Chemical mapping of a 177-nucleotide RNA with 2A3 and DMS.
RNA sequence: GGGAACGACUCGAGUAGAGUCGAAAAUGGAAGUGAUUCUUCAAAUUCAGGUAGCACAAGUGGUGGAUACUACACUACUGUAUCUCAAGCUGUUCAUAGUUUGUUGAGUAAUGUGAAUCCACAAGUGUCAGUAGUCAGUGUUCGCACUGACUACUGAAAAAGAAACAACAACAACAAC
Reactivity to 2A3 in 0.01 (KOAc 150mM, MgCl2 10mM, bicine 150mM(pH8.5), 24C), signal-to-noise 7, nucleotides 027 to 126: u190g070g020a040a030g020u100g100a160u200u020c000u010u070c060a080a080a090u130u070c030a040g140g060u170a040g040c020a010c050a160a140g130u050g130g000u010g000g090a020u040a130c070u060a010c060a000c030u030a010c000u030g070u170a160u060c020u000c020a010a010g000c010u040g080u300u180c080a120u190a140g010u010u000u040g090u050u060g050a040g020u060a040a000u040g020u020g070a050a050u000c020c000a010c010a050a050g040u020g030
Reactivity to DMS in 0.01 (KOAc 150mM, MgCl2 10mM, bicine 150mM(pH8.5), 24C), signal-to-noise 4, nucleotides 027 to 126: u040g000g000a070a100g010u000g000a170u020u030c050u010u020c030a050a070a120u030u020c060a060g020g000u020a100g050c020a030c090a070a100g000u040g020g020u000g000g000a050u000a040c110u050a060c080a050c070u000a010c010u000g000u060a090u010c090u010c000a030a040g020c000u010g010u060u040c190a060u070a030g020u000u000u000g010u050u010g000a020g010u020a020a060u010g000u020g010a070a030u000c020c010a020c030a140a110g010u020g000

For 2A3 the reverse transcriptase was SuperScript II with manganese. It was measured as part of the RMDB library OK1LIB.